Source information:
The record gives the reactivity of an RNA of 177 nucleotides to 2A3 and DMS. It was measured as part of the RMDB library OK2TRN. Reactivities are given for positions 27 through 126. The 2A3 profile rests on 1,535 reads. For DMS the reverse transcriptase was MarathonRT.
RNA sequence: GGGAACGACUCGAGUAGAGUCGAAAAGUGCAGCCGUUGCUGACGUGCUACCGCGCUGCGAAAUCGGUUCGCGACCAGCUGUGCCAAGCCCGGAUGGGUGCCGAGCGGUCGGGUUACCACAUCGGCACCUCAUCGCUAGCUUCGGCUAGCGAUGAGGAAAAGAAACAACAACAACAAC
Reactivity to 2A3 in 0.01 (KOAc 150mM, MgCl2 10mM, bicine 150mM(pH8.5), 24C), signal-to-noise 2, nucleotides 027 to 126: g060u050g020c000a000g000c010c000g060u070u080g050c060u090g090a140c080g130u110g050c030u080a070c130c010g020c040g060c040u140g010c040g030a020a050a020u200c050g030g010u100u060c020g010c020g100a040c000c060a050g030c010u050g000u100g060c010c000a040a060g040c000c000c000g030g000a070u150g060g010g010u000g030c000c000g010a010g000c060g010g040u050c110g070g070g040u230u150a020c020c020a050c030a290u010c010g010g000c000a010
Reactivity to DMS in 0.01 (KOAc 150mM, MgCl2 10mM, bicine 150mM(pH8.5), 24C), signal-to-noise 3, nucleotides 027 to 126: g020u010g020c000a020g010c010c270g010u010u010g010c050u030g010a150c090g000u010g020c070u000a090c130c050g000c080g010c130u000g010c030g000a030a160a090u010c050g020g000u000u000c190g010c020g000a090c030c070a190g020c020u000g010u000g000c000c070a060a130g020c010c010c050g010g010a070u010g000g000g020u010g010c000c010g000a030g010c060g010g010u000c060g020g010g020u000u000a070c010c010a010c060a150u000c000g020g000c000a040